Annotation
The record gives the reactivity of an RNA of 177 nucleotides to DMS and 2A3. For 2A3, 17,281 sequencing reads were counted. Conditions: 150 mM KOAc, 10 mM MgCl2 and 150 mM bicine (pH 8.5), 24 C. In probing experiments dimethyl sulfate is read out at A N1 and C N3, which are open when not base-paired. It was measured as part of the RMDB library OK2TST.

[RMDB]
RNA sequence: GGGAACGACUCGAGUAGAGUCGAAAAGACCUCAUGGCAUCUGGAACACACCCGUUACCUCCGUCAGCCAUCAUGAGUGGAGGGGAUGAUAUCGUGUCUCGUGUCAUAGAUUUCAACUCCAUAUGGGUAUAUUUACAUAUUUCGAUAUGUAAAUAUAAAAAGAAACAACAACAACAAC
Reactivity to DMS in 0.01 (KOAc 150mM, MgCl2 10mM, bicine 150mM(pH8.5), 24C), signal-to-noise 9, nucleotides 027 to 126: g010a160c050c030u000c090a030u000g010g000c010a020u000c060u010g020g010a060a030c040a040c030a120c210c080c020g010u000u000a110c020c000u000c010c010g010u000c030a040g000c170c170a090u010c170a080u010g000a040g020u010g030g010a030g010g000g000g010a030u000g010a090u010a090u010c150g010u000g000u000c020u000c090g010u000g010u000c010a010u000a090g010a060u000u000u000c060a080a070c090u000c010c040a110u010a110u000g010g010g010
Reactivity to 2A3 in 0.01 (KOAc 150mM, MgCl2 10mM, bicine 150mM(pH8.5), 24C), signal-to-noise 9, nucleotides 027 to 126: g040a030c000c010u010c030a020u010g000g000c010a030u030c140u220g020g050a060a000c020a000c000a020c020c020c000g020u030u040a040c010c010u010c000c000g050u010c020a040g070c120c030a180u150c040a080u090g030a020g170u150g020g010a010g000g020g010g010a020u050g010a020u040a060u250c090g000u000g010u010c010u010c050g030u030g000u010c010a010u020a050g020a010u050u110u070c040a050a040c030u030c050c020a070u110a130u300g080g040g020